The data come from the RNA Mapping Database (RMDB), library M2RFPK.
Structure probing data (2A3) for a 207-nucleotide construct.
The reactions ran in a buffer of 150 mM KOAc, 10 mM MgCl2 and 150 mM bicine (pH 8.5), at 24 C.
As a SHAPE reagent, 2A3 marks flexible, mostly unpaired nucleotides at the ribose 2'-OH.
2A3 adducts were read by reverse transcription with SuperScript II with manganese.

RNA sequence: GGGAACGACUCGAGUAGAGUCGAAAACGUGUCCGUCGGCGUAGCCGACAACAUGCCCAGGUAGCCCAGACCUUCAAGGCUACGGUGCGUUGCGACGCACGGUCUGAUACUUCACAACGACGUUCACAAGAUCGGAUCACUUUCGAGUGAUCCGAAAACAUACCAGUCCGUUCGCGGACUGGUAUGUAAAAGAAACAACAACAACAAC
Reactivity to 2A3 in 0.01 (KOAc 150mM, MgCl2 10mM, bicine 150mM(pH8.5), 24C), signal-to-noise 1, nucleotides 027 to 156: c040g000u040g000u030c090c070g000u000c000g010g040c280g200u150a040g020c000c000g020a000c000a000a000c010a000u060g010c020c000c010a020g010g010u000a000g000c020c010c150a020g000a010c000c010u000u000c000a000a000g000g010c020u000a000c010g000g000u000g000c000g020u050u030g060c240g080a040c010g010c000a000c000g000g000u020c040u000g000a010u040a220c140u090u300c090a020c020a240a080c090g080a020c040g060u060u100c040a090c000a140a000g050a220u020c000g030g000a000u000c000a040c000u000u070u220c210g060a000g000u020g010a000u000c000c000g020a010a000a000